[RMDB]
Overview: The record gives the reactivity of an RNA of 207 nucleotides to DMS and 2A3. The reactions ran in a buffer of 150 mM KOAc, 10 mM MgCl2 and 150 mM bicine (pH 8.5), at 24 C. It was measured as part of the RMDB library OK3TST. The 2A3 profile rests on 830 reads.
RNA sequence: GGGAACGACUCGAGUAGAGUCGAAAAGCAAUGGUGUCUGGAUCGGGAGAACAAAAAGCACUAAUUCCAGGAGCGGCUUUGAAAUGAUUUGGGAUCCAAAUGGGUGGACUGAAACGGACAGUAGCUUUUCAGUGAAACAAGAUAUCGUAGCAAUAACUCUGUAAUCAUCCUUCGGGAUGAUUACAGAAAAAGAAACAACAACAACAAC
Reactivity to DMS in 0.01 (KOAc 150mM, MgCl2 10mM, bicine 150mM(pH8.5), 24C), signal-to-noise 1, nucleotides 027 to 156: g050c080a120a100u000g000g040u010g000u010c020u000g040g000a150u000c040g030g020g000a140g010a050a190c050a050a060a100a060a060g060c090a040c040u000a120a130u000u010c090c060a010g000g020a060g050c000g020g080c020u030u000u000g000a050a030a110u000g020a050u010u000u010g010g020g020a080u020c020c010a030a050a080u000g030g020g070u000g040g050a070c000u000g040a020a080a140c130g000g000a120c080a120g000u000a080g020c030u020u000u000u000c050a090g000u000g030a110a070a030c080a040a080g020a080u000a020u000c080g000u020a100g000c060a050a140u000a050a190c120
Reactivity to 2A3 in 0.01 (KOAc 150mM, MgCl2 10mM, bicine 150mM(pH8.5), 24C), signal-to-noise 1, nucleotides 027 to 156: g000c000a000a060u150g010g000u010g020u000c030u030g030g000a040u020c050g080g010g050a090g030a050a030c040a030a070a020a000a000g000c000a010c090u050a090a040u110u030c030c030a090g030g030a030g030c070g070g000c050u060u020u050g070a050a070a060u100g030a070u100u030u060g000g040g040a040u050c030c010a000a060a060u040g020g030g010u090g000g010a000c000u020g000a080a100a000c040g010g020a010c020a060g070u050a000g020c000u000u000u000u070c020a000g000u000g060a030a020a030c020a090a020g000a030u040a000u030c030g040u080a000g000c000a000a040u110a090a060c020